[RMDB]
RNA sequence: GGGAACGACUCGAGUAGAGUCGAAAAGGUAGGUACUGCGCAAUCUACCAGAGGCCGAGUGCAAGCCUCGUACUCGAAGAUCUCGGUAUGCCACAUAGAGAUCAUUUUAGGUAUACCAGCGCAGAAAGGGAUGGUAGUUGUUCGCAACUACCAUCCCAAAAGAAACAACAACAACAAC
Reactivity to 2A3 in 0.01 (KOAc 150mM, MgCl2 10mM, bicine 150mM(pH8.5), 24C), signal-to-noise 2, nucleotides 027 to 126: g000g000u010a010g000g000u080a300c020u000g000c000g000c010a050a070u020c000u000a000c000c000a000g000a000g000g000c020c000g010a000g060u040g040c080a130a010g180c030c010u010c050g010u010a020c000u000c030g030a080a000g020a170u010c010u000c000g020g010u000a000u010g040c010c000a020c030a030u200a020g110a000g020a060u110c000a010u030u090u040u060a030g010g030u000a000u010a020c000c030a010g000c000g000c000a000g000a040a040a030
Reactivity to DMS in 0.01 (KOAc 150mM, MgCl2 10mM, bicine 150mM(pH8.5), 24C), signal-to-noise 2, nucleotides 027 to 126: g000g000u010a040g030g020u000a000c000u000g060c010g010c000a150a040u020c000u000a030c000c000a210g000a000g000g000c110c000g000a040g000u040g000c270a030a110g010c270c000u000c000g000u000a010c040u000c000g010a300a040g000a060u000c010u000c020g010g000u000a080u000g000c030c010a170c190a270u060a080g000a060g040a140u040c140a050u000u000u050u010a140g020g130u000a000u000a040c000c010a020g000c030g050c000a000g000a060a040a100